[RMDB]
RNA sequence: GGGAACGACUCGAGUAGAGUCGAAAAGUUUCUAAGUUCGCUUAGAAACAAAUCCAGGGCGGAAACGAACGUGCCUGACCCUAUUCGUUAAAGAUUUUCAAAAAACGUUCCUCUUCGGAGGAACGAACCAUCCUGUAUUGUUCGCAAUACAGGAUGGAAAAGAAACAACAACAACAAC
Reactivity to 2A3 in 0.01 (KOAc 150mM, MgCl2 10mM, bicine 150mM(pH8.5), 24C), signal-to-noise 3, nucleotides 027 to 126: g000u020u020u000c000u020a010a020g020u020u090c150g040c130u000u000a000g000a010a010a000c000a010a050a000u040c030c010a020g000g000g000c010g040g070a240a190a020c040g070a120a010c020g080u080g280c020c010u080g040a150c010c010c000u070a190u090u190c090g050u080u190a070a050a060g070a190u090u100u110u250c120a050a080a000a010a040a020c010g000u010u000c000c000u000c010u030u050c210g100g000a020g000g000a000a000c000g000a010a000
Reactivity to DMS in 0.01 (KOAc 150mM, MgCl2 10mM, bicine 150mM(pH8.5), 24C), signal-to-noise 3, nucleotides 027 to 126: g000u000u010u000c000u010a010a010g020u000u010c230g030c010u000u000a000g020a020a000a020c000a050a070a100u010c150c150a050g000g020g000c020g000g010a050a080a080c250g010a110a080c070g000u000g000c070c000u010g020a100c030c010c010u000a090u010u000c070g010u000u010a100a100a170g000a070u000u010u000u000c060a010a110a050a060a120a100c010g000u000u000c000c000u000c000u000u000c170g010g000a000g010g000a000a000c000g010a020a060